The data come from the RNA Mapping Database (RMDB), library OK2TRN. The record gives the reactivity of an RNA of 177 nucleotides to 2A3 and DMS. Values cover nucleotides 27 to 126. For DMS, 1,904 sequencing reads were counted. The reactions ran in a buffer of 150 mM KOAc, 10 mM MgCl2 and 150 mM bicine (pH 8.5), at 24 C.
RNA sequence: GGGAACGACUCGAGUAGAGUCGAAAAGUUAGAUGCUGACAUAUUUGCGUUCUCCAACGCUAGGUUUAAUUGAAUUGAGGCUCAGUUUAAGCAAGCCGUCCACAGACCAUCCAGUAUCACGACGAUACUUCGCGUACAAAUUCGUUUGUACGCGAAGAAAAGAAACAACAACAACAAC
Reactivity to 2A3 in 0.01 (KOAc 150mM, MgCl2 10mM, bicine 150mM(pH8.5), 24C), signal-to-noise 2, nucleotides 027 to 126: g030u030u040a010g000a100u080g000c030u010g010a040c040a070u290a200u070u090u190g000c000g020u020u000c080u070c070c030a010a010c030g020c050u070a100g000g080u050u000u090a070a040u090u100g120a060a060u070u120g030a060g110g000c010u020c090a080g010u010u160u130a060a020g020c000a040a010g040c040c000g040u000c060c020a060c000a020g050a040c030c000a020u050c010c000a030g050u020a020u030c010a000c190g090a030c070g020a020u020a080
Reactivity to DMS in 0.01 (KOAc 150mM, MgCl2 10mM, bicine 150mM(pH8.5), 24C), signal-to-noise 3, nucleotides 027 to 126: g000u010u010a050g040a050u000g020c040u000g000a050c110a080u020a110u000u010u010g000c020g020u010u000c110u010c140c140a080a090c050g010c050u000a070g000g030u000u000u000a050a100u000u000g000a050a090u000u010g000a170g010g000c090u000c040a050g010u000u000u010a060a050g000c170a040a050g030c020c020g010u000c020c100a070c120a040g010a080c040c050a090u000c120c070a060g020u000a010u000c020a110c150g020a060c110g020a100u010a110